Source information
Source: RMDB library OK1LIB, as collected in RNAgym. The record gives the reactivity of an RNA of 177 nucleotides to DMS and 2A3. For 2A3, 2,273 sequencing reads were counted. For DMS the reverse transcriptase was MarathonRT.
[RMDB]
RNA sequence: GGGAACGACUCGAGUAGAGUCGAAAACAAACAUGGGCGAAAACGUCUCGUCAAGAAAGACGUGACGAAAAAUUCCGCGUUCAAGUAUGCCAAACGCGGGUGGCAUACAAAUCGCCCAAAAACAAAAGAUGACGUAAGUCUUCGGACUUACGUCAUCAAAAGAAACAACAACAACAAC
Reactivity to DMS in 0.01 (KOAc 150mM, MgCl2 10mM, bicine 150mM(pH8.5), 24C), signal-to-noise 2, nucleotides 027 to 126: c180a060a030a040c190a160u020g020g020g060c000g030a010a050a100a140c000g000u010c030u000c000g040u000c010a160a120g010a080a110a050g000a000c000g000u000g040a000c000g000a020a110a040a120a020u000u080c000c000g030c090g040u000u000c120a050a070g020u030a000u000g000c000c010a000a090a040c240g060c010g000g000g060u000g000g000c000a040u020a020c150a010a160a070u000c000g000c000c020c000a030a080a060a070a010c300a060a030a020a130
Reactivity to 2A3 in 0.01 (KOAc 150mM, MgCl2 10mM, bicine 150mM(pH8.5), 24C), signal-to-noise 2, nucleotides 027 to 126: c020a010a070a010c070a090u050g000g010g000c000g000a000a050a070a050c010g010u000c010u010c030g000u020c030a010a100g180a300a170a020g000a050c010g000u010g000a020c000g130a030a000a000a100a000u090u050c000c000g000c080g100u110u120c040a060a030g040u010a060u100g070c010c030a000a050a050c090g000c000g010g000g000u020g000g000c030a030u030a040c000a040a090a040u010c000g000c000c000c010a000a020a030a000a000c000a000a060a000a000